[RMDB]
RNA sequence: GGGAACGACUCGAGUAGAGUCGAAAAGGUGCGCCGCGUGAUCGAGCAUUACCGCGAAUUGCAGGACGUGAUCGCGUUGCUCGGCAUCGAUGAGCUCGGCGCGGACGACCGGCGGCUCGUCGGCCGACAGUAUCGGUGGCUUCGGCCACCGAUACUGAAAAGAAACAACAACAACAAC
Reactivity to DMS in 0.01 (KOAc 150mM, MgCl2 10mM, bicine 150mM(pH8.5), 24C), signal-to-noise 1, nucleotides 027 to 126: g000g000u000g010c000g030c020c000g040c140g030u020g030a120u010c010g010a060g030c000a080u020u010a080c300c030g010c020g000a090a030u000u000g020c010a090g040g030a280c230g020u000g000a010u000c000g050c050g030u000u020g020c020u000c000g030g070c080a070u010c050g000a100u010g000a160g000c130u000c020g020g000c000g000c010g010g000a080c020g020a060c030c010g000g000c020g000g000c060u010c030g040u010c000g020g020c020c000g000a130
Reactivity to 2A3 in 0.01 (KOAc 150mM, MgCl2 10mM, bicine 150mM(pH8.5), 24C), signal-to-noise 2, nucleotides 027 to 126: g170g000u140g020c050g000c020c000g010c020g080u130g030a130u090c010g000a000g040c020a010u050u190a130c090c030g000c010g060a060a160u010u090g030c020a010g200g220a090c100g050u040g000a010u010c000g020c000g070u040u010g010c010u000c030g000g000c000a100u060c010g050a110u110g050a010g020c050u070c020g060g030c300g000c050g150g010a000c040g000a000c000c050g170g000c030g030g080c040u050c120g050u020c020g010g010c020c010g010a020